[RMDB]
RNA sequence: GGGAACGACUCGAGUAGAGUCGAAAACAGAGCUGAUGGGCCAUGUACCUAUCCAAAAUGAGAUCCCAUCUUGCACACUGUGCUAAUUUGAGAUUUUCAUGCCUCCUACUUGGAGAGAUCUGGACUACUAACUGUAUGACGUUCGCGUCAUACAGAAGAUUAGGACUGAGUUCGCUCAGUCCUAAUCAAAAGAAACAACAACAACAAC
Reactivity to DMS in 0.01 (KOAc 150mM, MgCl2 10mM, bicine 150mM(pH8.5), 24C), signal-to-noise 2, nucleotides 027 to 156: c020a070g020a060g000c040u010g020a080u000g020g010g050c000c060a130u010g010u000a020c000c000u000a060u010c010c040a090a060a100a070u000g060a040g000a050u000c020c000c000a020u000c100u000u000g010c010a010c020a280c160u040g030u000g020c000u010a010a050u000u000u010g010a030g020a040u000u000u000u000c040a040u000g000c050c000u000c010c010u000a130c170u000u000g000g000a100g000a090g000a040u000c010u000g010g020a160c000u000a110c300u000a080a230c000u000g030u000a000u000g030a000c000g010u000u010c300g000c030g000u000c000a020u000a000c000a010g000a020a080
Reactivity to 2A3 in 0.01 (KOAc 150mM, MgCl2 10mM, bicine 150mM(pH8.5), 24C), signal-to-noise 7, nucleotides 027 to 156: c020a010g020a020g050c090u100g020a020u030g010g020g000c060c060a140u150g050u160a110c030c020u050a060u060c050c030a120a080a040a070u060g010a030g000a060u050c000c000c000a000u000c030u010u070g010c010a020c030a080c160u220g000u020g020c060u120a080a110u060u050u060g050a060g010a050u030u060u080u070c030a020u110g040c010c010u020c010c010u100a260c100u140u240g000g000a000g000a010g010a030u020c020u040g010g050a030c020u070a040c010u060a300a050c000u040g000u000a000u000g000a000c000g010u030u010c140g010c010g120u000c000a000u000a000c000a000g000a000a010